[RMDB]
RNA sequence: GGGAACGACUCGAGUAGAGUCGAAAAGUCAGUCAACUAGGAGGACGCGCGGGAACUAGUGACUGACAGAAAGAGCUCUGCAUAGAUUCUUUGCCCGCGCGUCCUCGAAUCUAUGACAGAGCUCAAACAGUGCGUAGGUGUUCGCACCUACGCACUGAAAAGAAACAACAACAACAAC
Reactivity to 2A3 in 0.01 (KOAc 150mM, MgCl2 10mM, bicine 150mM(pH8.5), 24C), signal-to-noise 2, nucleotides 027 to 126: g010u000c000a000g000u000c010a010a140c170u030a020g060g100a070g040g000a020c010g020c000g000c000g020g100g020a050a090c010u030a000g000u000g000a000c020u000g000a000c000a000g050a020a090a020g000a000g010c000u000c000u010g000c000a000u000a010g000a040u070u020c040u240u180u300g170c000c000c000g000c000g000c010g000u000c000c000u000c000g000a010a000u000c000u000a000u000g060a040c040a000g020a000g000c020u020c000a000a020a000
An RNA of 177 nucleotides, treated with 2A3 and read out base by base. Reactivities are given for positions 27 through 126. The RNA was probed in 150 mM KOAc, 10 mM MgCl2 and 150 mM bicine (pH 8.5) at 24 C. For 2A3 the reverse transcriptase was SuperScript II with manganese. The 2A3 profile rests on 1,006 reads.